[RMDB]
This 177-nucleotide RNA was probed chemically with DMS. DMS adducts were read by reverse transcription with MarathonRT.
RNA sequence: GGGAACGACUCGAGUAGAGUCGAAAACUCGGUCCGGCGCAACGAGGCGAGACUGGCCCACGCGCGAGCCCGUGCCCGCUUCGACUGGCUGCUCCUGGCCCGCGGCAGGCCGUCCAAACUGUACGGCAGUUGUGCCACGAUUCGUCGUGGCACAACUAAAAGAAACAACAACAACAAC
Reactivity to DMS in 0.01 (KOAc 150mM, MgCl2 10mM, bicine 150mM(pH8.5), 24C), signal-to-noise 1, nucleotides 027 to 126: c050u000c070g040g000u000c060c010g000g020c110g020c020a100a070c090g030a120g000g010c000g000a040g000a050c020u020g020g000c000c030c010a110c210g000c100g010c090g000a050g000c000c030c090g040u000g030c030c020c090g000c060u000u000c030g010a090c060u010g010g010c060u010g000c040u000c030c030u010g000g000c000c000c060g070c170g000g010c070a170g000g020c020c000g010u000c050c070a060a100a160c210u000g000u040a040c050g000g020c050